[RMDB]
RNA sequence: GGGAACGACUCGAGUAGAGUCGAAAAAAAAAAAAAGAUAUGGAACGUAUCACGUGACAUGAAAUUGCUGUCGGAAACGACAGGAUUUCAACAGCACGUGAGUACGUUCCUAAGUCACAAAAAAAAACACAUUAACGAAGUUCGCUUCGUUAAUGUGAAAAGAAACAACAACAACAAC
Reactivity to 2A3 in 0.01 (KOAc 150mM, MgCl2 10mM, bicine 150mM(pH8.5), 24C), signal-to-noise 2, nucleotides 027 to 126: a000a000a020a000a000a000a000a030a080g060a040u140a020u100g010g000a020a000c000g000u000a000u090c010a010c010g010u010g080a100c020a160u080g020a030a000a030u110u230g300c020u020g000u010c000g040g030a150a050a010c000g010a000c010a000g010g000a000u000u010u020c020a030a050c050a040g090c000a010c000g010u000g000a000g010u010a000c000g000u000u020c000c000u000a010a000g000u020c010a000c090a070a120a030a010a000a020a020a020a010
Reactivity to DMS in 0.01 (KOAc 150mM, MgCl2 10mM, bicine 150mM(pH8.5), 24C), signal-to-noise 2, nucleotides 027 to 126: a000a000a000a000a020a030a160a050a070g000a050u010a300u010g020g000a000a000c010g000u000a010u010c000a010c010g000u000g000a060c050a250u000g010a000a000a000u000u000g000c000u000g000u000c000g030g010a120a060a130c000g040a000c000a010g000g000a000u000u000u010c010a020a050c300a110g000c000a000c010g000u010g000a050g010u020a000c010g010u010u000c000c000u000a030a040g010u010c040a050c210a000a000a000a020a010a030a090a050a130